[RMDB]
The record gives the reactivity of an RNA of 177 nucleotides to 2A3 and DMS. For 2A3 the reverse transcriptase was SuperScript II with manganese. It was measured as part of the RMDB library RFMREP.

RNA sequence: GGGAACGACUCGAGUAGAGUCGAAAAAAGACUUCACAAUGGUUUGAUAACUAGGUGCAGGAUGCUGAUUUGAGCCUCUCCCAAUUCUCUAAUAACCUCACUGGAGGUUAACCAGGCAGGGCUCAAUAUAACAUUACAAGUUCGCUUGUAAUGUUAUAAAAGAAACAACAACAACAAC
Reactivity to 2A3 in 0.01 (KOAc 150mM, MgCl2 10mM, bicine 150mM(pH8.5), 24C), signal-to-noise 4, nucleotides 027 to 126: a000a000g030a020c020u040u010c020a000c020a070a300u080g010g080u040u070u150g170a150u180a150a000c030u020a030g100g000u010g010c010a010g020g030a070u050g030c030u050g030a190u070u030u030g000a000g010c010c000u060c030u010c040c000c020a010a050u100u020c030u000c000u010a040a170u010a080a080c000c010u010c010a100c200u150g260g000a000g000g000u020u010a010a020c030c010a000g010g000c030a010g030g020g000c010u000c010a000a000u020
Reactivity to DMS in 0.01 (KOAc 150mM, MgCl2 10mM, bicine 150mM(pH8.5), 24C), signal-to-noise 6, nucleotides 027 to 126: a090a080g000a130c030u000u000c050a050c040a070a110u000g010g010u000u000u010g010a140u000a050a040c040u000a030g010g020u000g010c080a020g000g000a100u000g010c090u000g000a120u000u000u000g010a020g010c010c000u010c150u010c050c000c030a090a130u010u010c030u010c030u000a100a140u000a020a010c000c010u000c000a210c300u020g000g010a020g010g010u000u000a010a060c140c200a040g000g020c210a090g000g000g010c010u000c010a020a040u010